Structure probing data (2A3 and DMS) for a 177-nucleotide construct. The data come from the RNA Mapping Database (RMDB), libraries RFM100 and RFMREP. For 2A3, 948 sequencing reads were counted. Conditions: 150 mM KOAc, 10 mM MgCl2 and 150 mM bicine (pH 8.5), 24 C.
[RMDB]
RNA sequence: GGGAACGACUCGAGUAGAGUCGAAAAAGUAAUACAUCACACGUGGAACGAUGUAUGAACCCGCGCGGACCACCGCGCAAGGCUAAAUACUAGUUGGCGACCGAUAGUGAACAAGUACCGCGAGGGACCGAUAACGACCAUUCGUGGUCGUUAUCGGAAAAGAAACAACAACAACAAC
Reactivity to 2A3 in 0.01 (KOAc 150mM, MgCl2 10mM, bicine 150mM(pH8.5), 24C), signal-to-noise 2, nucleotides 027 to 126: a000g100u200a060a000u130a040c000a010u030c000a030c050a040c070g200u100g070g040a060a050c000g000a030u020g000u020a000u000g000a010a030c010c010c020g040c000g070c070g020g060a160c030c010a110c080c020g020c000g000c030a070a030g000g000c040u010a090a060a060u090a130c050u010a040g080u000u000g150g000c010g000a030c110c070g000a060u020a120g130u120g010a000a000c080a250a040g000u000a030c000c000g030c000g000a030g000g040g040a000
Reactivity to DMS in 0.01 (KOAc 150mM, MgCl2 10mM, bicine 150mM(pH8.5), 24C), signal-to-noise 2, nucleotides 027 to 126: a000g010u000a070a020u000a000c010a020u010c000a190c180a190c160g000u030g040g050a080a120c080g000a010u010g000u000a000u000g020a120a180c050c010c010g040c040g000c010g020g000a120c230c300a080c050c050g080c000g010c010a000a010g020g000c120u000a000a130a060u060a090c190u000a020g010u000u000g020g000c010g000a110c060c070g020a100u010a060g000u020g020a090a020c160a040a010g000u010a060c020c000g000c010g020a070g010g000g020a140